Background:
Structure probing data (DMS and 2A3) for a 207-nucleotide construct. The RNA was probed in 150 mM KOAc, 10 mM MgCl2 and 150 mM bicine (pH 8.5) at 24 C. For DMS, 9,572 sequencing reads were counted.

RNA sequence: GGGAACGACUCGAGUAGAGUCGAAAAUUAACACCACAUGGAAGCCACCAAGGCUUAGGGCUUGUACUCUUCUGAAGCAAUGGCCCAAGCUAUACCUUGACUCAUUUUAGUCAUGGCUGGAGUUGGAACAGCCACAAUGAAGGGUGCCAUGUCUGGACUACUAUGAUAGUUUCGACUAUCAUAGUAGAAAAGAAACAACAACAACAAC
Reactivity to DMS in 0.01 (KOAc 150mM, MgCl2 10mM, bicine 150mM(pH8.5), 24C), signal-to-noise 4, nucleotides 027 to 156: u000u010a100a120c050a170c020c010a090c060a060u010g020g020a080a110g010c020c010a150c100c140a110a300g030g010c020u000u000a070g020g000g020c020u010u000g040u000a030c020u000c030u000u020c120u000g000a120a110g040c040a060a150u000g010g000c010c020c010a050a040g000c030u000a090u000a070c040c040u000u010g020a090c000u030c140a190u010u000u010u010a060g020u000c050a060u000g010g030c010u000g000g000a100g010u000u010g000g030a030a130c040a060g000c010c000a030c030a050a120u010g010a070a060g010g020g010u000g000c020c030a070u000g000u000c010u000g000g000a300
Reactivity to 2A3 in 0.01 (KOAc 150mM, MgCl2 10mM, bicine 150mM(pH8.5), 24C), signal-to-noise 7, nucleotides 027 to 156: u080u030a050a020c040a050c060c010a010c010a020u030g030g030a070a050g060c030c010a060c030c040a150a120g040g000c000u030u020a140g010g000g000c010u020u060g070u180a100c030u040c040u290u090c080u200g150a110a010g000c080a060a090u140g030g000c010c010c000a000a000g000c000u050a030u070a170c010c050u030u050g000a010c000u020c110a190u070u050u080u280a010g030u020c020a040u040g010g000c000u000g020g030a150g090u130u100g050g050a080a010c010a010g000c010c020a030c040a040a100u160g020a070a040g050g000g000u010g020c010c010a020u040g020u030c030u020g010g010a020